[RMDB]
RNA sequence: GGGAACGACUCGAGUAGAGUCGAAAAAUCUCCCAUAUCCUUGCUGGUUUGGAUUUUGAUUAUAAUCCUGUUGUGUCCUCGAUUACGGGACGCACUGAGUCUGUUUCCUUUGGUGAAGUCUAUGCGCUUUUUCUUCUUCUUUCGAGAAGAAGAAAAAAAAAGAAACAACAACAACAAC
Reactivity to 2A3 in 0.01 (KOAc 150mM, MgCl2 10mM, bicine 150mM(pH8.5), 24C), signal-to-noise 1, nucleotides 027 to 126: a000u040c040u030c000c000c000a040u030a010u030c010c010u000u030g000c060u090g050g010u100u130u040g030g000a010u000u040u050u090g270a170u020u130a080u140a170a050u060c000c040u040g050u130u030g010u070g000u030c000c000u110c030g120a150u040u200a060c040g040g000g010a000c000g000c010a000c000u000g010a010g050u000c020u210g060u020u040u030c010c000u100u080u110g010g000u000g100a070a010g020u000c020u020a110u060g020c000g030c030
Reactivity to DMS in 0.01 (KOAc 150mM, MgCl2 10mM, bicine 150mM(pH8.5), 24C), signal-to-noise 4, nucleotides 027 to 126: a090u020c110u010c050c000c000a120u010a080u010c040c020u000u020g010c040u000g000g010u010u010u000g010g010a070u000u010u010u010g010a120u010u020a060u020a080a070u010c020c020u010g000u030u000g030u000g000u000c010c000u000c120g010a220u020u040a070c200g010g000g000a020c000g010c020a020c100u010g010a040g010u010c020u020g010u000u000u010c000c000u000u000u010g010g010u000g010a060a100g010u010c040u000a090u010g010c120g000c100
Source information:
This 177-nucleotide RNA was probed chemically with 2A3 and DMS. Reactivities are given for positions 27 through 126. The RNA was probed in 150 mM KOAc, 10 mM MgCl2 and 150 mM bicine (pH 8.5) at 24 C.